[RMDB]
RNA sequence: GGGAACGACUCGAGUAGAGUCGAAAAGAAAGAAAGAAAAGGAGUCUGCCAGUGGAGUCAGCACACCUGCUUUUCACCUGUGAUCCCAGGAGAGGAAGCAGCUGCCUCUGAGGCCUCAGGCUCAGAACAGGAUUAGCUUAUUCGUAAGCUAAUCCUGAAAAGAAACAACAACAACAAC
Reactivity to 2A3 in 0.01 (KOAc 150mM, MgCl2 10mM, bicine 150mM(pH8.5), 24C), signal-to-noise 9, nucleotides 027 to 126: g080a010a060a010g110a030a100a020g100a020a120a020a030g140g010a000g010u010c020u020g000c010c010a070g040u140g180g010a010g020u030c020a000g020c040a030c020a050c090c030u030g010c010u050u020u030u090c060a080c010c000u020g050u120g100a140u140c030c030c010a000g020g000a060g000a010g030g030a010a000g000c010a000g000c000u010g010c000c000u000c000u020g020a050g010g010c000c010u060c020a010g000g000c000u000c030a000g020a040a020
Reactivity to DMS in 0.01 (KOAc 150mM, MgCl2 10mM, bicine 150mM(pH8.5), 24C), signal-to-noise 7, nucleotides 027 to 126: g000a110a070a110g000a100a100a090g020a080a070a110a150g010g010a010g010u000c010u000g010c040c030a070g010u050g010g010a030g020u010c020a020g000c300a090c140a120c250c160u000g010c000u000u010u010u000c010a140c010c000u000g010u020g000a120u020c200c160c000a070g000g000a050g010a060g000g000a010a020g010c000a030g000c020u000g010c070c000u000c000u010g000a270g000g010c110c300u020c090a050g000g010c010u010c010a060g010a080a140